The record gives the reactivity of an RNA of 177 nucleotides to DMS. Conditions: 150 mM KOAc, 10 mM MgCl2 and 150 mM bicine (pH 8.5), 24 C. The DMS profile rests on 675 reads. It was measured as part of the RMDB library OK2TRN. For DMS the reverse transcriptase was MarathonRT.

RNA sequence: GGGAACGACUCGAGUAGAGUCGAAAACAGAGGAGCUGGCACCAGGGCUGGCCGGGAAUGUGCUGCUCUCCAGAGGCACGUCCAGAGGCUCCUCAGGGCCCUGCCAAAGGCUGAUUGUCCUCACGCCUGACCAUAACCACUUCGGUGGUUAUGGUCAAAAAGAAACAACAACAACAAC
Reactivity to DMS in 0.01 (KOAc 150mM, MgCl2 10mM, bicine 150mM(pH8.5), 24C), signal-to-noise 1, nucleotides 027 to 126: c040a100g000a020g110g000a030g020c000u000g010g000c140a060c110c100a110g010g010g010c070u000g020g010c000c000g010g000g030a030a020u010g030u000g010c040u010g000c070u000c040u010c120c200a060g000a290g010g010c000a020c000g020u000c010c000a110g020a250g030g020c010u010c110c030u000c060a090g000g000g030c030c000c010u010g020c090c060a030a090a130g010g040c080u000g000a130u010u000g010u010c010c020u030c060a170c290g000c000c030